[RMDB]
RNA sequence: GGGAACGACUCGAGUAGAGUCGAAAAGAAGAUGAUGUGUAGGAUAGGUGGGAGGCUUUGAAGUGUGGACGCCAGUCAGCAUGGAGCCGACCUUGAAAUACCACCCUUUAAUGAAAAACAAAUACAAGUACAAAUGGUCUUUCGAGACCAUUUGUACAAAAGAAACAACAACAACAAC
Reactivity to DMS in 0.01 (KOAc 150mM, MgCl2 10mM, bicine 150mM(pH8.5), 24C), signal-to-noise 1, nucleotides 027 to 126: g010a080a040g040a110u000g030a040u000g000u020g010u000a060g010g030a140u010a050g000g000u000g020g000g010a210g020g000c000u020u000u010g000a060a120g010u000g030u020g020g020a010c000g020c160c260a070g010u000c010a110g000c040a010u000g000g000a030g010c000c020g000a050c220c070u000u000g010a040a090a070u040a020c010c020a060c040c000c050u010u010u000a020a100u010g000a050a020a050a010a080c140a070a080a100u020a080c190a080a150